[RMDB]
Structure probing data (DMS and 2A3) for a 207-nucleotide construct. 2A3 adducts were read by reverse transcription with SuperScript II with manganese. It was measured as part of the RMDB library M2RFPK. For 2A3, 1,100 sequencing reads were counted. The DMS profile rests on 2,117 reads.
RNA sequence: GGGAACGACUCGAGUAGAGUCGAAAACCUGGUUUUGGGUUCCAGGCUAGCCCUAUCUAUCGGUCGAGAUGCGAGCGCUUAAGCUCAAAUUGAGUGGCUGAGUUAGUGGUGAACGUAUCCCUAUGUUAAAACGGUAGCUGCUUCGGCAGCUACCGAACCUAAAAUCUCUGUUCGCAGAGAUUUUAGGAAAAGAAACAACAACAACAAC
Reactivity to DMS in 0.01 (KOAc 150mM, MgCl2 10mM, bicine 150mM(pH8.5), 24C), signal-to-noise 1, nucleotides 027 to 156: c000c010u010g030g020u000u010u000u000g030g000g010u020u000c000c010a080g010g030c050u000a280g000c000c010c000u000a030u010c040u000a110u010c040g000g010u000c000g000a300g030a020u000g000c300g030a050g040c020g040c300u010u000a050a160g040c000u010c020a050a300a070u010u000g010a160g050u000g000g020c020u020g000a060g010u010u010a030g010u020g000g010u000g000a010a060c040g000u000a100u000c000c000c000u000a120u000g020u000u010a070a090a080a160c020g020g030u010a050g000c000u000g000c010u000u000c300g040g020c020a000g000c020u000a010c020c010g010a000a030
Reactivity to 2A3 in 0.01 (KOAc 150mM, MgCl2 10mM, bicine 150mM(pH8.5), 24C), signal-to-noise 2, nucleotides 027 to 156: c010c000u020g030g010u100u030u090u040g080g010g000u090u000c000c000a030g000g030c020u020a020g020c000c010c000u010a030u030c010u010a110u080c010g010g040u020c030g010a030g000a160u010g030c030g010a000g010c050g020c260u300u300a110a080g000c000u000c000a010a020a000u010u000g030a010g030u200g010g000c010u010g030a000g010u000u020a060g010u120g130g000u020g030a080a010c050g030u020a140u120c020c020c010u050a110u120g080u040u090a070a110a030a040c000g020g000u000a010g010c000u010g060c000u040u050c120g100g000c020a000g000c000u000a000c000c000g000a000a000